RNA sequence: GGGAACGACUCGAGUAGAGUCGAAAAGCAAAGCCCUUAGCGAUUGCCCAGCCACUUUCACGCAGCAGGGUGUGGGCGGGGUCUUCCCCAUCCCAAAAGAGAAAUCCUUCUAAAAUGGGUAGACGGGCAAGAGUGGUUAGUUCGCUAACCACUCUUGAAAAGAAACAACAACAACAAC
Reactivity to DMS in 0.01 (KOAc 150mM, MgCl2 10mM, bicine 150mM(pH8.5), 24C), signal-to-noise 3, nucleotides 027 to 126: g000c030a090a080a180g000c000c010c010u000u010a210g020c020g010a230u020u000g000c000c000c000a130g020c020c000a090c070u010u010u010c080a090c110g010c090a120g020c170a100g000g000g020u010g000u000g030g020g050c040g020g000g000g000u010c060u000u010c010c000c010c060a090u000c000c000c000a050a060a210a070g010a040g010a030a060a140u000c080c080u000u010c030u000a020a040a070a180u010g000g000g010u010a040g000a070c220g000g000g010
Reactivity to 2A3 in 0.01 (KOAc 150mM, MgCl2 10mM, bicine 150mM(pH8.5), 24C), signal-to-noise 1, nucleotides 027 to 126: g020c030a060a030a060g000c010c010c000u030u100a040g020c060g100a080u020u130g020c000c010c000a010g020c030c010a090c030u100u240u170c100a070c120g160c070a120g050c020a050g100g050g000u050g090u000g030g000g000c000g010g010g000g000u000c000u020u010c000c000c000c010a050u090c020c000c020a000a080a010a000g040a000g050a010a060a090u100c000c050u070u000c030u030a130a160a130a140u040g020g000g000u030a060g030a040c060g000g010g000
Structure probing data (DMS and 2A3) for a 177-nucleotide construct. 2A3 adducts were read by reverse transcription with SuperScript II with manganese. For 2A3, 1,386 sequencing reads were counted. The reactions ran in a buffer of 150 mM KOAc, 10 mM MgCl2 and 150 mM bicine (pH 8.5), at 24 C.